[RMDB]
RNA sequence: GGGAACGACUCGAGUAGAGUCGAAAAGACGCCUGUGUGGCGAAGCGAGCAUGAGAUGGAGCCGCAAGAGAAGAUGAGAUAGAAGCGGCUCGAUAGCUUGCUCGCGAAAAGAUCCAUCUCACAGAGAGAUACCACUGGUGUUCGCACCAGUGGUAUCAAAAGAAACAACAACAACAAC
Reactivity to 2A3 in 0.01 (KOAc 150mM, MgCl2 10mM, bicine 150mM(pH8.5), 24C), signal-to-noise 4, nucleotides 027 to 126: g080a010c030g040c020c000u100g060u070g060u160g120g010c020g000a000a030g000c000g000a010g000c000a000u020g010a010g000a140u050g080g000a010g000c000c010g000c030a070a080g100a000g030a230a050g080a080u300g080a050g010a160u190a120g070a120a020g020c000g000g000c000u000c000g040a000u000a000g030c000u000u000g000c000u000c000g000c010g010a000a000a000a000g040a020u000c020c000a080u030c030u020c030a100c130a040g110a000g010a010
Reactivity to DMS in 0.01 (KOAc 150mM, MgCl2 10mM, bicine 150mM(pH8.5), 24C), signal-to-noise 3, nucleotides 027 to 126: g010a110c030g040c000c000u000g000u110g000u010g000g020c070g010a100a150g030c000g010a050g060c000a010u000g000a060g010a010u000g010g000a000g020c010c000g000c030a120a150g000a170g000a130a080g020a150u070g000a140g000a150u040a100g000a220a160g010c000g000g000c010u000c000g010a010u000a020g000c040u010u000g020c000u010c000g000c020g000a020a030a090a140g010a190u030c000c040a110u000c020u000c000a170c150a100g000a050g010a120